[RMDB]
RNA sequence: GGGAACGACUCGAGUAGAGUCGAAAAAUCGCGCCUGGUCGGAACAUAACGACGGCGGGCCGGUGGGGAAUCAGGGGGCUACCGUGGGAUAGAGAUGAGACAGCCCCUCCGAUGGCACCAAGCGUCGCACACUGGCCAUACUUCGGUAUGGCCAGAAAACCCUACAUACUUUCGAGUAUGUAGGGUUAAAAGAAACAACAACAACAAC
Reactivity to 2A3 in 0.01 (KOAc 150mM, MgCl2 10mM, bicine 150mM(pH8.5), 24C), signal-to-noise 2, nucleotides 027 to 156: a000u040c030g000c010g030c030c040u130g090g000u050c040g010g050a170a120c030a070u220a170a050c050g030a030c020g060g080c020g020g000g000c080c000g010g000u110g030g020g010g010a070a130u170c060a110g020g010g000g000g000c010u040a050c040c040g000u080g040g060g000a030u120a100g030a010g070a070u120g010a020g020a090c010a020g020c010c010c010c000u000c000c000g010a020u020g010g020c020a020c050c010a080a020g020c000g030u050c030g060c030a060c010a020c080u010g000g030c000c000a000u000a030c010u010u030c040g000g000u020a000u000g010g000c000c000a000g010a020a000
Reactivity to DMS in 0.01 (KOAc 150mM, MgCl2 10mM, bicine 150mM(pH8.5), 24C), signal-to-noise 1, nucleotides 027 to 156: a060u010c030g000c020g020c020c010u000g000g050u000c030g020g000a130a260c090a160u000a120a080c020g040a120c030g000g010c030g010g000g060c050c070g000g030u010g020g000g020g040a100a110u000c070a100g010g000g000g100g010c020u000a020c080c030g000u000g010g010g030a190u010a070g000a150g000a100u000g010a160g010a080c050a120g050c020c030c000c000u000c020c020g000a060u000g000g000c010a100c030c020a000a190g030c060g030u000c040g040c080a090c080a180c040u000g050g000c000c000a010u000a000c020u000u010c250g040g030u000a010u010g000g020c010c000a040g000a010a030